Source: RMDB library OK1LIB, as collected in RNAgym. Chemical mapping of a 177-nucleotide RNA with DMS and 2A3. The DMS profile rests on 28,384 reads. For 2A3, 24,462 sequencing reads were counted. For 2A3 the reverse transcriptase was SuperScript II with manganese. The reactions ran in a buffer of 150 mM KOAc, 10 mM MgCl2 and 150 mM bicine (pH 8.5), at 24 C.
RNA sequence: GGGAACGACUCGAGUAGAGUCGAAAACUUAUUACAAGCUUUACGACAAUGGGACAGCAACUUUAUGUAAGACAGUUUCUGGAUGUAAAUUGACCAGUCCUGUACUGACGUGUGGAAAUCCUCCUAGCUAAAACAAAUAGUUCGCUAUUUGUUUUAGAAAAGAAACAACAACAACAAC
Reactivity to DMS in 0.01 (KOAc 150mM, MgCl2 10mM, bicine 150mM(pH8.5), 24C), signal-to-noise 9, nucleotides 027 to 126: c020u000u020a090u030u020a100c150a040a080g000c060u000u000u020a070c060g010a070c070a070a070u030g010g000g010a070c080a080g000c050a060a060c120u010u010u010a040u030g010u010a050a050g020a100c180a050g010u010u020u010c020u000g000g000a080u020g010u020a040a040a080u020u010g000a080c050c030a060g010u000c030c010u000g000u010a050c070u000g010a060c080g020u000g010u000g000g000a050a070a090u020c030c030u000c030c040u010a070g010
Reactivity to 2A3 in 0.01 (KOAc 150mM, MgCl2 10mM, bicine 150mM(pH8.5), 24C), signal-to-noise 9, nucleotides 027 to 126: c010u070u080a050u160u190a150c070a100a020g030c040u070u090u120a050c060g050a030c050a080a120u110g020g010g030a020c010a030g010c010a050a060c040u090u130u090a100u150g070u060a030a030g040a050c040a070g030u040u090u010c030u030g040g020a050u060g060u180a060a130a170u120u090g070a090c000c020a000g020u020c000c010u040g030u070a070c010u020g050a020c020g060u070g030u060g080g050a030a070a050u040c010c020u010c000c000u020a040g030